[RMDB]
RNA sequence: GGGAACGACUCGAGUAGAGUCGAAAAGAUAUGGAUAGUAUGGAGCUAGACUCGGAAACGAGUCAUAGCGUUGAAAUACGUCCUAAGUCAAAAGCAUUUCCUCUAAGUUCGCUUAGAGGAAAUGCAAGAAACUAAACAGGUUCGCCUGUUUAGUUUCAAAAGAAACAACAACAACAAC
Reactivity to DMS in 0.01 (KOAc 150mM, MgCl2 10mM, bicine 150mM(pH8.5), 24C), signal-to-noise 4, nucleotides 027 to 126: g000a020u000a030u020g000g000a020u000a080g000u010a010u000g000g000a020g010c010u000a020g000a010c000u000c000g010g010a010a010a020c010g010a020g000u000c030a040u000a000g020c000g020u000u010g000a080a150a010u000a000c010g000u000c000c000u000a010a130g000u010c010a100a080a120a150g010c000a000u000u000u000c000c000u000c000u000a000a010g010u000u010c250g020c010u000u000a000g010a010g000g000a000a000a000u000g010c000a020a030
Reactivity to 2A3 in 0.01 (KOAc 150mM, MgCl2 10mM, bicine 150mM(pH8.5), 24C), signal-to-noise 3, nucleotides 027 to 126: g000a010u020a010u050g020g010a010u070a300g040u000a010u020g000g000a020g000c000u000a000g000a000c000u000c010g000g010a010a010a000c000g000a000g010u010c010a030u010a010g000c010g010u070u010g000a000a000a000u010a000c010g000u000c000c000u000a010a000g010u000c030a060a000a120a050g000c000a010u010u000u000c020c000u000c010u000a010a030g010u040u170c270g070c190u010u000a000g000a000g000g000a000a000a000u000g000c000a000a010